The record gives the reactivity of an RNA of 177 nucleotides to DMS. DMS adducts were read by reverse transcription with MarathonRT. The reactions ran in a buffer of 150 mM KOAc, 10 mM MgCl2 and 150 mM bicine (pH 8.5), at 24 C.
RNA sequence: GGGAACGACUCGAGUAGAGUCGAAAAGAUAUGGAGGCAUACCGGGAGCUCGAGUAUCGGAAACGAUACGAGAGCGAGGAUCGGUCAUGCCUCCUAAGUCAAACGGCUAACCUUCGGGUUAGCCGAAUCUCGAUGAGAAGUUCGCUUCUCAUCGAGAAAAAGAAACAACAACAACAAC
Reactivity to DMS in 0.01 (KOAc 150mM, MgCl2 10mM, bicine 150mM(pH8.5), 24C), signal-to-noise 1, nucleotides 027 to 126: g020a070u010a300u000g010g020a010g020g000c000a000u000a040c010c010g020g050g010a100g050c000u000c030g000a300g000u000a000u000c000g030g000a100a050a100c000g030a010u000a000c010g000a300g010a000g010c000g030a020g020g000a110u000c000g000g000u040c280a010u000g000c000c000u010c000c000u000a020a050g000u020c020a040a130a290c040g000g000c000u000a000a000c010c010u020u050c230g010g000g020u010u000a010g000c040c000g000a010a020